[RMDB]
RNA sequence: GGGAACGACUCGAGUAGAGUCGAAAAGAGGAUUCAACGAGCUUCGUAGCAACGAUAGCAACGUAGCUUUUGCUACGACCCAAGCUAUCGAGGGAAGCUACGUCCCAUGCUCGAGGGGAGAAUCCGAGAUGGAUGAUAAUUUCGAUUAUCAUCCAUCAAAAGAAACAACAACAACAAC
Reactivity to DMS in 0.01 (KOAc 150mM, MgCl2 10mM, bicine 150mM(pH8.5), 24C), signal-to-noise 9, nucleotides 027 to 126: g010a240g010g010a020u000u010c020a150a180c030g010a040g010c010u000u010c010g030u000a020g020c020a130a170c040g000a010u000a010g010c010a090a150c020g010u000a010g000c000u000u000u010u010g020c000u000a010c000g000a110c130c140c160a110a110g000c010u000a010u000c010g010a120g010g010g010a130a130g000c020u000a010c020g010u010c090c070c090a100u010g000c010u000c010g010a120g020g010g000g010a180g000a030a020u010c000c000g000a130
Reactivity to 2A3 in 0.01 (KOAc 150mM, MgCl2 10mM, bicine 150mM(pH8.5), 24C), signal-to-noise 9, nucleotides 027 to 126: g130a030g020g000a010u010u010c040a100a060c050g010a000g010c010u060u040c020g030u040a010g000c020a050a080c010g010a010u010a010g000c010a040a060c010g000u000a000g000c010u120u170u220u300g000c000u000a000c010g120a120c030c030c010a040a000g000c000u010a000u010c000g010a100g040g120g070a120a030g010c010u020a020c010g040u040c030c040c010a030u130g000c000u010c010g030a080g030g060g020g000a130g010a010a000u000c000c000g000a030
About this RNA: Chemical mapping of a 177-nucleotide RNA with DMS and 2A3. For 2A3 the reverse transcriptase was SuperScript II with manganese. The DMS profile rests on 27,419 reads. Reactivities are given for positions 27 through 126. The reactions ran in a buffer of 150 mM KOAc, 10 mM MgCl2 and 150 mM bicine (pH 8.5), at 24 C.